Chemical mapping of a 177-nucleotide RNA with DMS. Values cover nucleotides 27 to 126. The RNA was probed in 150 mM KOAc, 10 mM MgCl2 and 150 mM bicine (pH 8.5) at 24 C. For DMS the reverse transcriptase was MarathonRT.

[RMDB]
RNA sequence: GGGAACGACUCGAGUAGAGUCGAAAAUGUCAGCGGUGGCGAAGGGGAACGAAGAGGAAGAAUAUUCGAGGAGUCGCGGGCAGCUCAACAGCACCCAGAACAGCCACGGCAGAGUUCGGAGCGACUCAACGAUUUUGGUUUUCGAACCAAAAUCGUUAAAAGAAACAACAACAACAAC
Reactivity to DMS in 0.01 (KOAc 150mM, MgCl2 10mM, bicine 150mM(pH8.5), 24C), signal-to-noise 1, nucleotides 027 to 126: u000g010u000c060a180g030c120g020g060u020g000g070c150g010a110a060g010g010g020g010a070a080c100g020a030a010g030a050g000g020a120a070g010a110a080u010a070u000u000c030g000a150g020g000a080g010u000c000g050c060g010g000g020c020a150g000c000u000c040a060a080c150a100g000c060a100c010c040c000a070g020a030a060c070a140g030c040c030a070c160g010g030c030a170g020a030g000u000u000c020g010g000a090g000c010g010a010c010u000c030